[RMDB]
RNA sequence: GGGAACGACUCGAGUAGAGUCGAAAAGAUAUGGAACAGAACUACAGCUUCCCAUGCCAAGUCGCGAUGAAAUGUUUCGGAAACGAAACAUGGAGCGACUUGGCAUGCAGCUGCUGUUCCUAAGUCAUCAGUAUUAUAACUUCGGUUAUAAUACUGAAAAAGAAACAACAACAACAAC
Reactivity to 2A3 in 0.01 (KOAc 150mM, MgCl2 10mM, bicine 150mM(pH8.5), 24C), signal-to-noise 4, nucleotides 027 to 126: g030a030u120a050u190g010g010a010a000c010a000g020a110a040c160u300a070c300a010g000c000u050u020c020c000c020a000u000g000c000c000a000a000g000u000c000g000c010g300a300u070g040a010a030a020u010g000u000u020u010c010g030g030a110a120a120c020g000a000a000a000c000a010u010g000g000a020g010c000g000a000c000u000u000g000g030c000a000u010g010c010a000g010c000u010g000c000u000g000u000u000c000c000u030a110a030g080u020c020a080
Reactivity to DMS in 0.01 (KOAc 150mM, MgCl2 10mM, bicine 150mM(pH8.5), 24C), signal-to-noise 7, nucleotides 027 to 126: g000a060u010a300u010g000g010a020a010c010a020g000a090a050c100u020a300c010a010g010c000u000u000c170c220c000a000u000g010c000c000a010a010g010u000c000g020c000g000a110u020g000a090a140a010u000g010u000u000u010c000g010g010a130a120a240c000g020a010a000a000c000a010u000g000g000a050g010c010g000a000c010u000u000g000g010c000a000u000g050c120a010g010c000u000g000c000u000g010u000u000c000c000u000a030a080g010u000c050a190
The record gives the reactivity of an RNA of 177 nucleotides to 2A3 and DMS. High 2A3 reactivity points to a flexible backbone, as in loops and unpaired stretches. The data come from the RNA Mapping Database (RMDB), library TTRINS.